Chemical mapping of a 177-nucleotide RNA with DMS and 2A3. It was measured as part of the RMDB library TTRDEL. The 2A3 profile rests on 1,788 reads. For 2A3 the reverse transcriptase was SuperScript II with manganese.
RNA sequence: GGGAACGACUCGAGUAGAGUCGAAAAGAUAUGGAAUUGUACACAGCGUUGAAAUCGGAAACGAUGGAGCUGGUACACGAUUCCUAAGUCAAACACUGUCAGUAAUCUUCGGAUUACUGACAGUGAACUCUGGAAAACAGUUCGCUGUUUUCCAGAGAAAAGAAACAACAACAACAAC
Reactivity to DMS in 0.01 (KOAc 150mM, MgCl2 10mM, bicine 150mM(pH8.5), 24C), signal-to-noise 2, nucleotides 027 to 126: g020a040u000a300u000g000g010a010a010u000u000g000u000a050c050a130c010a010g020c000g020u000u010g020a100a130a020u000c000g010g000a130a110a170c010g010a000u000g000g000a120g010c000u000g000g010u000a010c080a050c280g020a060u010u000c000c000u010a060a160g020u000c070a120a120a220c000a020c000u000g010u000c010a010g010u000a000a000u000c000u000u000c190g020g000a020u000u000a000c000u000g010a000c000a000g000u000g010a020a070
Reactivity to 2A3 in 0.01 (KOAc 150mM, MgCl2 10mM, bicine 150mM(pH8.5), 24C), signal-to-noise 2, nucleotides 027 to 126: g000a000u100a070u160g030g010a030a010u080u020g020u090a020c300a010c040a090g020c000g260u300u050g010a020a010a010u020c000g000g050a060a120a060c000g000a020u010g000g010a020g000c000u020g010g010u000a020c020a000c040g050a010u020u050c010c010u030a110a020g140u050c010a000a000a090c030a000c000u000g000u010c000a010g020u010a000a000u010c010u080u200c300g040g000a000u000u000a010c010u000g020a010c000a000g000u010g000a010a000